This 177-nucleotide RNA was probed chemically with DMS. DMS adducts were read by reverse transcription with MarathonRT. The DMS profile rests on 983 reads. The RNA was probed in 150 mM KOAc, 10 mM MgCl2 and 150 mM bicine (pH 8.5) at 24 C.

RNA sequence: GGGAACGACUCGAGUAGAGUCGAAAAGCAGCUACUGAGCUAAAGCAAGUGGGUAAAUGGCAUAGGGCCCAGGCUAGCUUCCAGAAAGCACCCCAGGAUGUCAGAGAAAUUGGGACAGUAACAUAUCUGAGAAAACAUGGUUCGCCAUGUUUUCUCAAAAAGAAACAACAACAACAAC
Reactivity to DMS in 0.01 (KOAc 150mM, MgCl2 10mM, bicine 150mM(pH8.5), 24C), signal-to-noise 2, nucleotides 027 to 126: g010c110a090g000c010u010a100c020u000g000a060g010c040u000a070a130a110g020c030a060a160g000u000g010g000g010u000a010a100a080u000g010g010c130a060u000a080g000g000g040c000c000c020a040g010g000c010u000a060g000c010u000u000c150c090a030g000a040a070a070g000c060a090c080c000c000c040a170g010g000a120u000g020u000c000a090g000a050g000a050a040a100u010u010g000g020g010a060c000a080g010u000a090a060c090a100u000a040u020c100